Record summary
Chemical mapping of a 207-nucleotide RNA with DMS. For DMS, 3,730 sequencing reads were counted. It was measured as part of the RMDB library RNAMAK. The reactions ran in a buffer of 150 mM KOAc, 10 mM MgCl2 and 150 mM bicine (pH 8.5), at 24 C.
[RMDB]
RNA sequence: GGGAACGACUCGAGUAGAGUCGAAAAUCCUAAGUCAUUCGAAAGCGUUUGACGUAUGUUGUCAGAAAUCGGAAACGAUUUCUUGGAUUUACAUACCGAGUGAGUAGAAUGAUAUGGAAAAGCUAUGACCCCAGAGUUCGCUCUGGGGUCAUAGCAAUCAUAAUCCCAGUUUCGACUGGGAUUAUGAAAAAGAAACAACAACAACAAC
Reactivity to DMS in 0.01 (KOAc 150mM, MgCl2 10mM, bicine 150mM(pH8.5), 24C), signal-to-noise 2, nucleotides 027 to 156: u020c020c010u010a070a220g020u000c010a020u000u010c000g000a300a200a300g010c020g010u000u000u000g020a130c130g020u000a000u000g020u000u000g030u000c010a090g010a000a010a000u000c000g040g000a150a120a300c020g010a020u000u000u000c000u010u020g040g000a030u000u010u000a010c000a020u010a020c020c010g000a120g010u010g010a180g000u000a170g010a050a000u000g000a020u000a220u000g010g000a120a070a120a200g000c020u010a020u000g000a030c000c000c000c000a030g000a090g060u000u010c300g010c010u000c000u000g020g010g000g000u020c000a000u000a020g000c010a000a010